[RMDB]
RNA sequence: GGGAACGACUCGAGUAGAGUCGAAAAGCAAGCUAGCCGGCAAAAAAGCAAACUUGACCACCAAGGAUAAAAGAGAUCUUAUCCAAGGAUGCAAAAGAUAAUCUCACUUUUGACACCCACUGAUGUCAAAACGUGCGGUUCUUCGGAACCGCACGAAGAAUGUUGUACGCUUCGGCGUACAACAUUCAAAAGAAACAACAACAACAAC
Reactivity to 2A3 in 0.01 (KOAc 150mM, MgCl2 10mM, bicine 150mM(pH8.5), 24C), signal-to-noise 2, nucleotides 027 to 156: g050c020a030a000g000c000u060a010g020c020c030g160g000c120a070a140a040a060a040a010g080c080a110a070a030c010u050u070g100a070c010c010a020c010c010a040a020g020g000a010u030a030a040a010a010g080a010g000a050u010c010u040u030a020u010c000c040a010a010g030g020a020u080g010c010a000a050a100a050g040a070u080a110a160u130c030u020c040a040c030u050u010u040u000g020a000c000a020c000c080c080a120c150u100g050a120u040g070u050c000a020a020a010a080c020g000u000g000c000g000g000u000u000c000u000u010c070g090g000a000a010c010c010g030c010a000c000g000a000a000
An RNA of 207 nucleotides, treated with 2A3 and read out base by base. 2A3 adducts were read by reverse transcription with SuperScript II with manganese. The 2A3 profile rests on 1,236 reads. The data come from the RNA Mapping Database (RMDB), library M2RFPK. Values cover nucleotides 27 to 156. The reactions ran in a buffer of 150 mM KOAc, 10 mM MgCl2 and 150 mM bicine (pH 8.5), at 24 C.